[RMDB]
RNA sequence: GGGAACGACUCGAGUAGAGUCGAAAAGAUAUGGAGGUCCAUCAGGCAACAGCUACGCGGUCGGAAACGACCGGUAGACAUGCCUGUGGACCUCCUAAGUCAAAAGUUCCUGGUUCGCCAGGAACAAGGAUCAGUUUUAGUUCGCUAAAACUGAUCCAAAAGAAACAACAACAACAAC
Reactivity to DMS in 0.01 (KOAc 150mM, MgCl2 10mM, bicine 150mM(pH8.5), 24C), signal-to-noise 3, nucleotides 027 to 126: g000a010u000a170u020g000g000a010g020g010u000c000c000a000u020c040a010g020g040c000a110a080c250a120g000c000u000a000c000g000c010g020g010u000c020g010g000a030a040a130c010g030a000c010c000g000g000u000a000g000a020c040a300u000g020c000c000u020g030u000g000g000a020c000c000u010c000c000u000a000a030g000u000c010a080a090a100a160g010u000u000c000c000u000g000g000u000u010c220g010c000c000a000g000g000a000a000c000a080a040
Reactivity to 2A3 in 0.01 (KOAc 150mM, MgCl2 10mM, bicine 150mM(pH8.5), 24C), signal-to-noise 3, nucleotides 027 to 126: g000a000u040a010u070g000g000a000g010g000u030c020c000a110u260c090a170g030g030c110a300a080c060a290g060c010u010a000c040g170c000g300g000u030c010g000g000a040a020a020c000g000a010c010c000g000g000u010a000g000a000c020a080u300g000c000c000u000g000u000g010g000a000c000c000u000c000c010u000a000a000g000u000c000a000a010a000a060g010u000u000c000c000u010g000g060u020u050c300g050c070c000a000g000g000a010a000c000a000a060